[RMDB]
RNA sequence: GGGAACGACUCGAGUAGAGUCGAAAACUGGCCAUCUGCAGUGUCACGCUCCGUGUAUUUGACAAGCUGAGUUGGACACUCUGUGUGGUAGAGUGUCAGUUUGUCAAAUACCCCAAGUGUGGCUCAUGUAUAAGACAACGUUCGCGUUGUCUUAUACAAAAGAAACAACAACAACAAC
Reactivity to 2A3 in 0.01 (KOAc 150mM, MgCl2 10mM, bicine 150mM(pH8.5), 24C), signal-to-noise 4, nucleotides 027 to 126: c030u050g090g010c040c020a140u060c090u150g030c040a060g020u010g010u050c010a000c010g010c000u000c030c030g020u030g010u050a020u010u010u010g000a010c000a000a010g000c010u040g010a040g210u230u170g260g040a030c000a010c000u000c000u000g140u030g130u180g160g080u120a010g000a000g020u010g040u010c010a010g000u000u000u010g000u000c000a010a000a000u000a000c030c020c000c010a010a010g000u000g000u000g000g000c000u010c010a050u040
Reactivity to DMS in 0.01 (KOAc 150mM, MgCl2 10mM, bicine 150mM(pH8.5), 24C), signal-to-noise 3, nucleotides 027 to 126: c080u000g010g000c070c070a120u000c090u000g020c100a080g020u000g020u000c010a010c010g020c000u020c120c300g010u000g000u000a010u000u000u020g010a010c000a000a010g000c000u000g000a130g030u000u010g010g030a280c000a010c000u010c000u000g000u020g050u000g020g010u010a010g010a020g010u010g000u000c020a030g010u000u000u000g000u000c010a000a010a000u000a000c000c040c030c070a060a040g010u010g020u000g000g000c010u000c100a060u020